This 207-nucleotide RNA was probed chemically with DMS and 2A3. Conditions: 150 mM KOAc, 10 mM MgCl2 and 150 mM bicine (pH 8.5), 24 C. Source: RMDB library OK3TST, as collected in RNAgym. For 2A3, 6,933 sequencing reads were counted.
RNA sequence: GGGAACGACUCGAGUAGAGUCGAAAAGAUACUCCUCUGGAAUCGGGAGAAUUGCAGACCUCGGUUACUGCGGCCCUGGGUGCUGCCAUAAGCGGAGGACGCGAUCCGCGGUAUCCGAGCAGUGACAUGAUUAGAGGAUUCUCCGAAGACAGCUCGGGUUAACUACAUGAUUCGUCAUGUAGUUAACAAAAGAAACAACAACAACAAC
Reactivity to DMS in 0.01 (KOAc 150mM, MgCl2 10mM, bicine 150mM(pH8.5), 24C), signal-to-noise 3, nucleotides 027 to 156: g020a190u010a080c030u010c000c010u000c040u000g030g040a200a110u000c030g000g000g000a070g020a100a080u000u010g010c020a160g000a160c120c000u000c020g000g010u000u000a050c040u010g030c080g030g000c080c010c040u040g020g020g050u000g030c010u020g010c000c100a140u000a090a160g020c020g030g010a140g010g010a170c080g010c060g010a130u000c040c020g000c020g020g020u010a020u000c000c010g000a170g000c010a100g020u000g000a120c080a120u000g020a190u000u000a090g020a140g020g010a130u000u000c010u000c010c010g010a110a080g010a260c070a100g010c070u000c040g000g020
Reactivity to 2A3 in 0.01 (KOAc 150mM, MgCl2 10mM, bicine 150mM(pH8.5), 24C), signal-to-noise 6, nucleotides 027 to 156: g040a000u150a100c030u030c010c000u010c010u010g010g050a060a050u020c040g070g070g010a050g000a030a030u050u070g110c050a030g030a140c010c000u000c010g000g000u010u010a000c000u000g000c000g030g000c030c050c080u110g040g060g010u080g070c020u060g110c020c020a160u160a230a050g030c050g050g040a040g040g060a030c020g010c030g190a100u130c020c010g000c000g000g000u000a010u010c000c000g020a010g000c020a010g020u030g030a050c040a130u170g030a130u190u220a090g030a050g130g010a010u010u000c000u000c000c010g010a030a000g060a020c010a020g030c080u080c070g110g000